[RMDB]
RNA sequence: GGGAACGACUCGAGUAGAGUCGAAAACGGAAGUUCCAUUCCCGUAGGGUUACAAUGUGUUGCUAGAAUAAACCGUAAGUCAUAGUACAUAUAGAGGCCAAUUCUGUAAACUUUUUUAAAGUCUAUGCUCACAAUCAUACUUCGGUAUGAUUGUGAGAAAAGAAACAACAACAACAAC
Reactivity to 2A3 in 0.01 (KOAc 150mM, MgCl2 10mM, bicine 150mM(pH8.5), 24C), signal-to-noise 3, nucleotides 027 to 126: c040g000g070a100a090g130u160u090c030c030a070u040u040c000c000c020g000u120a140g020g000g110u060u040a060c060a030a040u130g010u030g010u060u090g040c010u030a000g030a090a080u140a110a140a070c040c090g030u070a150a000g020u010c000a050u050a040g010u030a070c010a010u060a000u050a070g040a070g040g020c040c000a000a130u140u080c010u010g130u090a040a080a080c100u120u070u000u020u100u270a110a100a000g000u000c010u100a050u120g040
Reactivity to DMS in 0.01 (KOAc 150mM, MgCl2 10mM, bicine 150mM(pH8.5), 24C), signal-to-noise 3, nucleotides 027 to 126: c120g000g050a100a120g000u020u010c030c030a190u010u000c000c000c000g000u020a090g020g010g000u010u000a050c130a140a030u020g020u000g000u010u010g020c050u040a050g000a090a100u000a040a150a120c070c040g020u030a080a110g000u010c040a060u000a080g020u020a020c050a030u030a050u010a060g010a130g000g010c020c050a050a080u010u050c030u000g010u010a020a100a050c000u000u000u010u030u080u000a020a050a080g020u010c030u000a040u020g000